[RMDB]
RNA sequence: GGGAACGACUCGAGUAGAGUCGAAAAGGUUUCGACGCUGUUUGUGUACUCGUGGGAAGCGGGUCGAGGAUGCGAGGUUGUCUCGUUAACGAUCCUCGCAAAAUAUAAGUGCCAACUUAAAGCGCACUGAUCUAAGUCUUGCUGCUUAAGCGCUUAGCAUUGUUCGAUGGUUCGCCAUCGAACAAUGAAAAGAAACAACAACAACAAC
Reactivity to DMS in 0.01 (KOAc 150mM, MgCl2 10mM, bicine 150mM(pH8.5), 24C), signal-to-noise 1, nucleotides 027 to 156: g010g040u000u000u010c010g050a070c040g000c010u000g010u000u010u010g010u000g040u000a020c050u010c030g050u030g060g010g030a140a120g030c000g050g030g000u000c010g010a040g020g040a260u030g000c020g000a030g030g050u020u000g040u000c020u020c150g020u000u010a060a090c020g000a050u000c010c020u000c010g000c050a060a010a100a150u010a090u000a070a060g020u000g030c000c030a090a080c050u000u010a020a050a140g040c120g010c030a050c030u020g000a040u000c060u010a140a130g000u000c030u000u020g020c020u000g000c020u020u010a100a050g020c180g030c010u000u000a040g060
Reactivity to 2A3 in 0.01 (KOAc 150mM, MgCl2 10mM, bicine 150mM(pH8.5), 24C), signal-to-noise 1, nucleotides 027 to 156: g050g010u070u010u110c020g060a070c040g000c050u030g070u080u070u060g050u050g040u050a010c010u000c040g040u040g070g020g050a140a010g030c000g000g020g000u040c020g000a040g000g010a020u040g000c010g010a000g010g010u150u080g080u060c010u000c020g050u020u080a040a020c070g020a010u140c000c000u000c000g000c020a000a050a000a000u130a000u060a050a000g010u000g010c000c000a080a010c100u170u220a280a040a000g070c060g070c030a010c040u010g020a020u010c020u010a030a030g060u000c070u130u090g030c020u010g030c010u140u170a090a000g000c040g000c010u000u020a010g010
The record gives the reactivity of an RNA of 207 nucleotides to DMS and 2A3. It was measured as part of the RMDB library ARCHII. The 2A3 profile rests on 1,168 reads. 2A3 is a SHAPE reagent: it acylates the 2'-hydroxyl of flexible nucleotides of all four kinds.